This 207-nucleotide RNA was probed chemically with 2A3.
Conditions: 150 mM KOAc, 10 mM MgCl2 and 150 mM bicine (pH 8.5), 24 C.
Reactivities are given for positions 27 through 156.
2A3 adducts were read by reverse transcription with SuperScript II with manganese.
Source: RMDB library OK3TST, as collected in RNAgym.
RNA sequence: GGGAACGACUCGAGUAGAGUCGAAAAAUCAACACUGUCACACAAUUCCAACACCAAGAAACUCUGUGUACAAGUCGGUUCCAACGCCGUACGUUGUGCAUCUGUCCUACCAACUGGUGCCUCAUCCAAUGUCGCAGCCCUGCUAAUGGCCUCAGUCUCUGAUACAGGCUUUCGAGCCUGUAUCAGAAAAAGAAACAACAACAACAAC
Reactivity to 2A3 in 0.01 (KOAc 150mM, MgCl2 10mM, bicine 150mM(pH8.5), 24C), signal-to-noise 2, nucleotides 027 to 156: a010u130c060a050a060c030a040c040u050g040u130c000a000c010a000c030a050a110u140u060c030c000a050a030c020a020c040c040a040a120g100a090a080a040c100u080c060u110g000u010g020u060a000c000a000a050g000u000c020g010g090u090u120c170c120a080a060c170g000c000c000g110u150a010c050g090u070u020g010u040g030c000a020u070c030u090g090u000c010c000u010a040c000c000a090a030c030u060g060g010u030g040c000c000u040c020a100u060c030c040a090a100u160g040u060c020g010c040a010g000c020c010c010u020g020c000u080a030a050u080g010g000c000c010u030c010a030g080u090c070